[RMDB]
RNA sequence: GGGAACGACUCGAGUAGAGUCGAAAAUAUCAGAUGGCGAUCAUGGAAGGUCUUUAUGGGACUGCCGAUGCUUCCGCAAGCUAAGGUAACGCUGAUGGUGGAGACUUUUAAUGGUGUUGACAUCAUUGAGAUACCACUAGCUUCUCAACCAGAAGUCGUUUCUUCUCACAUUCGUGUGAGAAGAAACAAAAGAAACAACAACAACAAC
Reactivity to DMS in 0.01 (KOAc 150mM, MgCl2 10mM, bicine 150mM(pH8.5), 24C), signal-to-noise 1, nucleotides 027 to 156: u030a100u000c050a120g000a130u010g020g000c020g050a140u000c100a070u010g000g010a150a040g060g030u000c000u000u000u000a100u000g000g030g060a090c040u000g000c030c010g020a260u000g020c010u000u000c020c100g000c180a030a090g010c020u000a140a180g070g030u000a040a130c060g020c060u000g010a100u000g050g060u010g010g010a200g000a100c040u000u020u060u020a030a090u040g000g020u010g060u030u010g000a300c030a040u000c050a090u000u020g000a170g030a170u000a060c000c000a000c020u000a040g000c010u020u060c050u000c000a110a070c030c070a120g000a110a090g060u020c100
Reactivity to 2A3 in 0.01 (KOAc 150mM, MgCl2 10mM, bicine 150mM(pH8.5), 24C), signal-to-noise 3, nucleotides 027 to 156: u180a030u050c030a020g060a120u060g030g000c000g030a010u040c070a070u110g000g050a060a100g030g030u000c010u040u190u100a160u170g050g000g040a040c040u050g010c030c010g050a060u120g040c020u040u020c050c030g020c130a050a010g000c000u070a100a020g020g020u030a080a030c020g000c040u020g010a040u050g030g030u020g000g000a050g030a060c010u050u080u130u260a100a130u170g180g030u110g050u070u190g070a060c010a010u020c000a020u010u040g010a010g000a020u040a050c000c020a040c100u010a040g010c000u020u020c030u020c020a070a070c010c010a020g010a120a020g050u070c050